[RMDB]
RNA sequence: GGGAACGACUCGAGUAGAGUCGAAAAGAUAUGGAACUCAGGGUCGGGAGAACCUGGUUCGGAAACGAACCAGAGUUCGAGGAUCGACCUGAGUUCCUAAGUCAAAAUCAGACGUUCGCGUCUGAAAGUCCCUACAUAAGUUCGCUUAUGUAGGGACAAAAGAAACAACAACAACAAC
Reactivity to 2A3 in 0.01 (KOAc 150mM, MgCl2 10mM, bicine 150mM(pH8.5), 24C), signal-to-noise 2, nucleotides 027 to 126: g010a000u020a020u080g000g000a000a010c000u000c030a040g250g160g220u280c030g000g090g010a300g000a050a000c010c020u000g000g020u000u000c000g010g000a030a050a000c010g000a010a000c000c000a000g010a070g020u010u000c030g020a120g040g090a200u110c000g000a030c000c000u000g000a000g010u010u000c000c000u010a010a000g010u000c000a030a010a010a300u070c010a000g010a020c000g020u100u090c300g050c030g190u030c000u000g000a020a000a010
Reactivity to DMS in 0.01 (KOAc 150mM, MgCl2 10mM, bicine 150mM(pH8.5), 24C), signal-to-noise 2, nucleotides 027 to 126: g000a010u000a290u020g000g000a000a010c000u010c020a030g000g000g000u010c000g020g000g000a110g010a010a000c000c000u000g010g010u000u000c010g020g000a040a050a100c010g000a010a000c000c000a020g000a150g040u000u000c010g000a120g020g000a090u010c010g010a110c000c000u010g010a030g010u000u000c000c000u000a000a050g010u010c020a080a100a130a190u010c010a000g000a040c020g010u010u030c300g060c020g010u000c000u000g000a000a110a220